[RMDB]
RNA sequence: GGGAACGACUCGAGUAGAGUCGAAAACAACUAUUAUGUCUGAUUAUUAAGUGGCACAGCCAUAACAAUAGAAUCCACUUGGCACUGGAGAGCCACGCGCUGCAAAAUGAUGGUAUCCGCUUUCCAAAUAUCAUUAUCGUUUCGACGAUAAUGAUAUAAAAGAAACAACAACAACAAC
Reactivity to DMS in 0.01 (KOAc 150mM, MgCl2 10mM, bicine 150mM(pH8.5), 24C), signal-to-noise 7, nucleotides 027 to 126: c080a090a150c130u010a060u020u010a030u020g000u010c020u010g000a110u030u050a110u010u030a090a090g010u010g010g030c230a210c080a040g000c020c010a020u000a040a070c190a080a060u030a060g000a110a090u010c030c030a020c050u000u010g020g010c050a050c100u000g010g000a070g030a120g010c010c020a030c090g000c070g010c020u000g020c070a040a050a090a080u030g000a090u000g010g020u000a080u010c050c050g010c060u010u000u000c010c020a050a100
Reactivity to 2A3 in 0.01 (KOAc 150mM, MgCl2 10mM, bicine 150mM(pH8.5), 24C), signal-to-noise 9, nucleotides 027 to 126: c020a010a030c030u090a050u230u030a070u100g070u010c030u030g100a060u040u100a060u120u170a260a080g030u060g040g000c040a020c040a160g020c020c010a030u050a080a050c080a100a060u090a100g120a060a060u030c010c010a020c040u030u060g030g000c030a010c080u030g020g030a070g010a010g080c010c000a030c030g020c010g000c010u080g000c020a050a070a060a130u130g050a070u060g020g030u050a060u030c030c010g020c050u020u020u000c020c000a030a110